[RMDB]
RNA sequence: GGGAACGACUCGAGUAGAGUCGAAAAAUCACCGGUGGGGAACCCCAUACUGCAACGGCGUAGAAGUAAAUGCUAACCAAUCCGUGGUAUCUACGCGACGGAGCAUCCACGGAUAACUCUAACAAGGCUAAGCGUCUCGGUUUCGACCGAGACGCAACAUCAGCGAUUAGUUCGCUAAUCGCUGAUGAAAAGAAACAACAACAACAAC
Reactivity to 2A3 in 0.01 (KOAc 150mM, MgCl2 10mM, bicine 150mM(pH8.5), 24C), signal-to-noise 1, nucleotides 027 to 156: a000u060c040a030c070c010g070g040u040g010g020g010g040a110a100c020c020c010c020a050u140a120c030u080g010c080a100a010c020g030g000c030g000u020a000g000a070a020g050u100a030a030a040u080g000c030u150a100a110c110c050a050a070u050c010c010g000u010g000g000u020a020u000c000u010a020c020g030c000g080a100c060g070g040a020g000c000a000u020c000c020a000c000g000g000a010u010a020a010c020u030c010u070a010a050c050a180a090g120g020c010u160a250a040g020c000g000u000c000u020c000g030g010u000u050u140c200g100a040c000c000g020a000g000a000c010g010c010a000a000